Source: RMDB library OK1LIB, as collected in RNAgym. An RNA of 177 nucleotides, treated with DMS and 2A3 and read out base by base. For DMS the reverse transcriptase was MarathonRT. The RNA was probed in 150 mM KOAc, 10 mM MgCl2 and 150 mM bicine (pH 8.5) at 24 C.
[RMDB]
RNA sequence: GGGAACGACUCGAGUAGAGUCGAAAAGCGGUGCAGGUGCUGCUGGGCGGGAAUCCGUUCGCCGACGUGGCAGACGUUUCUUCCGAUCACCUCACCGAGGUUUAAAGGCGUCCUUCGCGGCGAAGCAAGUGGAUACAGGUUUCGACCUGUAUCCACUAAAAGAAACAACAACAACAAC
Reactivity to DMS in 0.01 (KOAc 150mM, MgCl2 10mM, bicine 150mM(pH8.5), 24C), signal-to-noise 3, nucleotides 027 to 126: g020c000g040g020u000g020c230a000g020g000u010g000c120u030g000c080u010g000g000g000c070g010g000g000a040a010u000c190c060g000u010u010c090g030c020c010g000a160c120g030u020g000g000c040a050g030a040c040g020u030u000u010c040u010u010c030c020g000a150u000c050a030c020c000u010c000a040c050c030g000a020g000g010u000u010u010a030a130a120g000g000c020g000u000c020c000u030u020c160g010c100g010g000c030g000a100a090g000c130a100
Reactivity to 2A3 in 0.01 (KOAc 150mM, MgCl2 10mM, bicine 150mM(pH8.5), 24C), signal-to-noise 4, nucleotides 027 to 126: g060c000g000g000u030g070c120a030g020g000u050g030c070u030g030c020u100g020g030g000c130g030g010g030a000a060u070c090c000g050u030u060c050g000c010c010g090a300c160g050u280g010g000c040a040g020a010c000g000u030u020u040c040u120u000c010c020g010a070u140c010a000c000c000u000c010a080c020c040g000a050g050g000u020u000u180a120a110a010g030g010c010g010u020c030c000u100u130c100g010c120g000g000c020g010a020a010g040c060a090